[RMDB]
RNA sequence: GGGAACGACUCGAGUAGAGUCGAAAACGCCACAGGCAGACAUACUCCGUCUCCACGCCCGCUUGUGGAUGGCGCUGGAUGUGUCCGGUGCUAUCGGACAUGCAAUGUUCCGUGCAGUCGCUAAGCAGGCGGGCUAGCAUUUCGAUGCUAGCCCGCCAAAAGAAACAACAACAACAAC
Reactivity to 2A3 in 0.01 (KOAc 150mM, MgCl2 10mM, bicine 150mM(pH8.5), 24C), signal-to-noise 2, nucleotides 027 to 126: c000g030c000c000a050c040a080g030g050c050a000g000a000c050a040u130a240c120u080c030c040g000u000c040u010c000c000a030c000g060c000c020c290g000c060u050u060g050u030g110g000a060u030g000g000c000g000c000u030g000g000a080u080g150u110g010u200c000c000g060g000u000g010c110u030a010u110c010g000g000a000c020a060u110g010c000a000a300u120g080u080u090c060c070g010u050g000c070a050g070u060c000g070c020u060a030a000g000c020a060